Conditions: 150 mM KOAc, 10 mM MgCl2 and 150 mM bicine (pH 8.5), 24 C.
Chemical mapping of a 207-nucleotide RNA with 2A3 and DMS.
The DMS profile rests on 1,583 reads.
DMS adducts were read by reverse transcription with MarathonRT.
For 2A3, 869 sequencing reads were counted.
RNA sequence: GGGAACGACUCGAGUAGAGUCGAAAAGAUUAUGAGGAUGCUGUUUUUUACUUUGUGGAUGAUGAUGAAAUAUGUAGUCGCGACUCCAUCAUUGAUCUAAUAGAUGAAUAUAUCACGUGGAGAAAUCAUGUUAUAGUGUUUAAUAAAGAUAUUACCAGCCGAUCUAUUUAUUCGUAAAUAGAUCGGCAAAAGAAACAACAACAACAAC
Reactivity to 2A3 in 0.01 (KOAc 150mM, MgCl2 10mM, bicine 150mM(pH8.5), 24C), signal-to-noise 2, nucleotides 027 to 156: g040a020u120u150a000u120g000a000g020g000a000u010g000c020u010g050u070u010u010u000u020u020a130c020u110u090u150g040u110g000g020a030u020g000a000u000g010a010u000g010a050a000a000u220a040u070g040u030a000g060u030c030g010c050g100a060c020u010c020c000a030u070c000a020u010u110g050a010u020c030u070a110a090u080a200g050a050u090g030a060a000u120a020u020a040u130c030a020c080g010u040g000g010a060g020a030a090a000u100c040a020u050g030u090u050a090u090a090g010u030g050u130u060u050a050a120u090a020a090a000g020a010u080a050u150u060a070c060c000a000
Reactivity to DMS in 0.01 (KOAc 150mM, MgCl2 10mM, bicine 150mM(pH8.5), 24C), signal-to-noise 1, nucleotides 027 to 156: g020a160u000u020a010u030g010a150g010g010a050u000g040c010u010g030u010u000u000u000u000u000a120c000u000u010u020g000u010g030g000a070u040g050a040u000g020a070u010g000a030a050a050u000a090u010g020u220a060g010u010c100g030c060g000a120c040u000c000c020a020u000c090a110u020u000g020a080u020c100u000a020a110u020a180g070a090u000g020a040a070u000a060u000a140u010c060a070c170g050u010g010g010a090g000a050a080a070u000c070a100u010g000u000u000a110u010a070g000u000g010u010u000u020a080a090u000a080a090a100g000a150u010a030u020u000a140c020c010a170